[RMDB]
RNA sequence: GGGAACGACUCGAGUAGAGUCGAAAAGGGGUCCGAGAGCGCACGGAGGGUUUGACAUGAUCUGAAGCCUCCACGGAUCAACAGCAAACCUACCCACCCGUGCCUCUCGGACGGAGGCACCCAAAUCUGUCCACUGUAGUUCGCUACAGUGGACAGACUUAUACUGAAUCUUCGGAUUCAGUAUAAGAAAAGAAACAACAACAACAAC
Reactivity to 2A3 in 0.01 (KOAc 150mM, MgCl2 10mM, bicine 150mM(pH8.5), 24C), signal-to-noise 4, nucleotides 027 to 156: g030g000g010g000u010c000c000g000a000g000a000g000c170g010c000a000c010g000g010a040g010g040g030u010u010u000g100a140c100a110u160g000a000u010c000u020g050a140a010g030c000c000u010c010c010a010c010g000g010a000u020c020a070a060c060a050g160c000a000a000a000c010c000u080a100c110c110c030a060c010c020c000g000u000g000c000c000u010c000u000c010g000g000a000c010g000g000a000g000g010c010a020c010c000c000a030a100a050u020c000u000g000u010c010c000a000c000u000g000u000a010g010u030u110c290g040c130u000a000c000a000g000u000g010g000a010c000a000g000a000
Reactivity to DMS in 0.01 (KOAc 150mM, MgCl2 10mM, bicine 150mM(pH8.5), 24C), signal-to-noise 2, nucleotides 027 to 156: g020g040g000g040u000c000c010g010a010g000a050g030c190g030c010a030c060g030g060a300g000g010g030u010u010u000g010a090c060a300u000g010a030u000c010u000g010a060a220g050c030c030u000c020c020a300c000g020g020a030u000c010a120a080c110a180g010c020a020a030a020c020c000u000a070c030c030c070a300c120c020c010g020u000g000c000c000u000c000u000c010g000g010a010c050g010g100a020g030g010c020a070c000c020c000a020a060a190u000c000u000g030u010c000c000a040c000u000g000u000a020g010u010u010c300g050c000u000a030c000a010g000u010g000g000a010c000a010g000a000
An RNA of 207 nucleotides, treated with 2A3 and DMS and read out base by base.
The reactions ran in a buffer of 150 mM KOAc, 10 mM MgCl2 and 150 mM bicine (pH 8.5), at 24 C.